Chemical mapping of a 207-nucleotide RNA with DMS.
Reactivities are given for positions 27 through 156.
The RNA was probed in 150 mM KOAc, 10 mM MgCl2 and 150 mM bicine (pH 8.5) at 24 C.
Source: RMDB library OK3TST, as collected in RNAgym.
[RMDB]
RNA sequence: GGGAACGACUCGAGUAGAGUCGAAAAGGAACACGUAUUAUUUUCUAAUCCUCACAAUAGGUCCUCAAAAUGAGCAACAUUUCCCCCUAUUUCAUACUUGAGGAAGCUGUGACUCAGAGAGACUAAGGCACUUGCCCAAGGUCUCUUAGUACAUUAAGAUUAUAGGCGUGUUCGCACGCCUAUAAUCAAAAGAAACAACAACAACAAC
Reactivity to DMS in 0.01 (KOAc 150mM, MgCl2 10mM, bicine 150mM(pH8.5), 24C), signal-to-noise 1, nucleotides 027 to 156: g030g010a100a090c060a020c150g000u010a160u000u000a170u020u000u010u000c070u020a040a190u000c020c070u020c040a050c100a070a040u000a060g010g030u000c000c020u030c000a000a070a070a120u000g000a050g040c110a050a080c120a060u010u000u000c020c040c020c000c090u010a110u000u000u000c030a110u000a100c110u000u000g010a020g030g020a010a050g010c040u010g040u000g010a300c020u010c040a300g000a070g010a070g000a030c010u030a210a230g000g000c010a250c100u000u000g060c010c000c010a030a220g000g000u000c000u000c000u000u000a020g020u000a080c040a150u010u010a090a190